[RMDB]
RNA sequence: GGGAACGACUCGAGUAGAGUCGAAAACAACGCGUGUUCGCACGCGUUGAAAGAAAGCACGAAAAUAAAAUAAGGGAAAAGGGAACGUGCACGCACCCAUAAAAACGAGCCCGUUCGCGGGCUCGAACUUAGAUUCUAUGUUCGCAUAGAAUCUAAGAAAAGAAACAACAACAACAAC
Reactivity to DMS in 0.01 (KOAc 150mM, MgCl2 10mM, bicine 150mM(pH8.5), 24C), signal-to-noise 2, nucleotides 027 to 126: c010a010a000c000g020c000g040u000g020u000u010c170g040c020a010c000g040c010g000u000u000g000a040a090a120g000a120a110a140g030c010a010c000g000a100a050a060a070u000a060a070a050a110u020a080a110g000g010g000a010a030a030a060g000g000g010a110a140c060g000u010g010c010a070c160g000c090a130c000c000c000a130u000a080a050a060a090a090c000g000a000g000c000c020c000g000u000u000c140g040c000g000g030g040c000u000c010g010a000a040
Reactivity to 2A3 in 0.01 (KOAc 150mM, MgCl2 10mM, bicine 150mM(pH8.5), 24C), signal-to-noise 4, nucleotides 027 to 126: c000a000a010c000g020c020g010u020g040u090u070c250g030c130a010c010g010c000g000u000u000g000a000a000a010g040a040a120a010g000c010a010c030g070a130a100a140a070u240a090a210a090a070u270a140a160g080g030g030a050a130a020a030g040g020g020a130a010c010g000u010g000c020a000c040g030c020a060c000c010c010a020u160a040a130a010a010a020c000g000a000g000c000c060c030g020u010u030c230g000c000g070g010g000c000u000c000g000a000a000